[RMDB]
RNA sequence: GGGAACGACUCGAGUAGAGUCGAAAAGAAAGAAAUAAGCCCGGUGCUAAAUCGGGGACGUGUGUGUGUCCUCAAGGGUUAUCUUGCCGAGAACCGCAUGAAAAGGGCGAAAAUAAAAAUAAAAGAAGGGUAUAUCAUCAUUCGUGAUGAUAUACCCAAAAGAAACAACAACAACAAC
Reactivity to 2A3 in 0.01 (KOAc 150mM, MgCl2 10mM, bicine 150mM(pH8.5), 24C), signal-to-noise 2, nucleotides 027 to 126: g080a000a080a000g120a050a190a020u140a060a000g000c000c020c000g020g000u040g030c040u080a130a180a130u100c040g010g000g050g000a000c020g050u050g000u040g030u060g050u030g020u120c000c020u020c070a000a120g030g030g000u150u070a180u020c030u090u190g030c050c020g000a000g000a080a060c050c000g000c020a030u120g060a140a040a000a080g070g030g000c130g050a120a040a000a000u040a000a060a040a060a000u180a020a030a000a000g090a020a260
Reactivity to DMS in 0.01 (KOAc 150mM, MgCl2 10mM, bicine 150mM(pH8.5), 24C), signal-to-noise 3, nucleotides 027 to 126: g010a130a100a100g000a050a130a090u000a090a260g000c020c000c000g050g080u010g030c060u000a010a180a060u000c030g000g000g030g000a010c010g030u010g010u010g020u010g030u000g000u020c000c000u020c030a060a120g010g020g020u010u000a050u010c050u020u070g020c110c130g030a030g010a020a060c040c020g010c050a030u010g000a040a150a060a120g000g010g000c010g000a040a010a050a090u070a000a050a100a210a090u090a060a120a040a100g000a150a110